[RMDB]
RNA sequence: GGGAACGACUCGAGUAGAGUCGAAAAUGUGGCUUGAGUGUGCGGGCGUGGGGCGUGCAAGGCGAGCGCGUGUGCCCACCCUGAGCCCCUCCCGCCGCCUACACCUUGAUCUUAUUUGAUUGGGUCGAGGUUCUCAUUAUUUCGAUAAUGAGAACCUAAAAGAAACAACAACAACAAC
Reactivity to 2A3 in 0.01 (KOAc 150mM, MgCl2 10mM, bicine 150mM(pH8.5), 24C), signal-to-noise 9, nucleotides 027 to 126: u130g010u030g020g030c070u080u110g040a070g110u080g040u110g020c020g010g010g010c100g090u110g000g010g010g000c030g020u090g040c030a070a070g070g020c050g040a060g040c050g000c060g050u200g110u220g070c000c010c000a030c000c010c000u010g020a020g000c000c000c000c010u010c010c000c000g010c000c010g010c000c000u030a030c030a030c020c010u020u120g020a030u020c020u050u190a250u220u250u140g110a180u040u080g010g010g000u020c040g030
Reactivity to DMS in 0.01 (KOAc 150mM, MgCl2 10mM, bicine 150mM(pH8.5), 24C), signal-to-noise 5, nucleotides 027 to 126: u030g020u020g010g010c090u010u000g000a090g030u010g010u010g020c010g000g000g010c300g000u010g000g010g010g000c040g000u040g020c070a040a030g000g020c110g010a130g000c030g010c180g010u010g030u030g000c000c020c020a100c040c000c020u010g000a230g000c000c020c010c000u000c000c030c030g020c010c010g010c010c020u010a080c110a050c010c030u000u030g000a020u000c010u010u030a110u020u020u010g010a100u000u000g000g000g000u000c040g010